RNA sequence: GGGAACGACUCGAGUAGAGUCGAAAAUGGCUCUCAAAAAGUAGAAUCCACUAGCACACCCACCUCCCGGACUUGGCUGGAAACUUGCACAUUUCGGAUGGCAGGUUUGGGAACCGCUGCCUUUCAGUAUUAACAAGAUAUUCGUAUCUUGUUAAUAAAAAGAAACAACAACAACAAC
Reactivity to 2A3 in 0.01 (KOAc 150mM, MgCl2 10mM, bicine 150mM(pH8.5), 24C), signal-to-noise 4, nucleotides 027 to 126: u080g020g000c010u010c000u000c000a080a080a020a050a010g070u080a050g050a060a060u030c010c010a030c070u040a030g030c040a010c000a040c060c010c000a030c000c010u020c010c010c000g010g000a050c050u060u100g040g060c020u050g040g030a040a020a020c020u030u110g020c080a080c000a210u040u100u100c110g090g040a020u040g040g000c010a010g030g000u020u030u050g010g020g000a020a020c020c030g050c080u040g020c030c000u030u060u050c020a020g040
Reactivity to DMS in 0.01 (KOAc 150mM, MgCl2 10mM, bicine 150mM(pH8.5), 24C), signal-to-noise 9, nucleotides 027 to 126: u010g020g010c060u000c020u010c040a060a080a100a110a060g010u000a070g010a120a100u000c020c020a070c090u000a060g010c050a070c080a080c040c010c030a100c080c050u000c020c000c020g010g000a060c070u010u010g010g010c020u000g010g000a050a030a030c030u000u000g000c050a120c060a120u000u000u010c130g010g010a070u000g000g010c000a020g000g010u000u000u000g010g010g010a070a070c070c050g010c060u000g010c040c030u000u000u000c070a090g010

The data come from the RNA Mapping Database (RMDB), library OK2TRN. The record gives the reactivity of an RNA of 177 nucleotides to 2A3 and DMS. The reactions ran in a buffer of 150 mM KOAc, 10 mM MgCl2 and 150 mM bicine (pH 8.5), at 24 C. For 2A3, 9,032 sequencing reads were counted. DMS adducts were read by reverse transcription with MarathonRT.